[RMDB]
RNA sequence: GGGAACGACUCGAGUAGAGUCGAAAAUUGGUCCGAUGUAAAACCCAUAAAGUAUCCCAGCGUCAGUGGAUCGCCCACGAUGCUCGAUGCACCGACGACUGAUGUGUACUGAAUUUUGUUCGUCAGGGUGUUCAAGAAAAAUGAACCAAUUGCGGGCAUGGCAAGGAAGAUUCGUCUUCCUUGCCAUAAAAGAAACAACAACAACAAC
Reactivity to 2A3 in 0.01 (KOAc 150mM, MgCl2 10mM, bicine 150mM(pH8.5), 24C), signal-to-noise 2, nucleotides 027 to 156: u040u040g030g010u050c010c010g060a050u070g030u140a020a050a110a050c050c010c010a060u140a140a180a010g010u020a050u140c000c030c030a000g000c000g000u000c050a030g000u010g010g040a040u030c040g080c030c040c020a120c180g040a110u130g000c020u010c030g000a030u050g080c000a010c020c030g000a000c000g110a140c000u040g050a190u050g080u040g000u070a010c020u030g150a140a150u110u130u110u090g010u080u020c070g090u100c090a090g060g000g070u100g020u040u040c010a000a030g160a140a140a040a020a040u120g000a010a010c000c010a040a060u050u020g040c030g030g000g000c030
Reactivity to DMS in 0.01 (KOAc 150mM, MgCl2 10mM, bicine 150mM(pH8.5), 24C), signal-to-noise 2, nucleotides 027 to 156: u000u000g010g010u010c030c020g020a090u010g020u000a060a050a090a100c030c020c050a190u010a080a140a070g010u000a030u020c030c010c000a080g000c020g030u000c000a030g000u000g040g000a060u010c030g020c030c000c060a120c070g020a180u000g040c030u010c030g010a070u000g000c000a020c000c000g020a030c010g010a090c010u000g000a030u000g030u000g000u010a120c040u000g030a120a130u000u000u010u000g010u000u000c040g010u000c080a160g020g000g020u010g020u010u000c050a100a120g020a010a080a050a100a130u010g000a040a030c020c020a050a130u010u000g000c030g000g040g000c100
Source: RMDB library OK3TST, as collected in RNAgym. An RNA of 207 nucleotides, treated with 2A3 and DMS and read out base by base. Values cover nucleotides 27 to 156.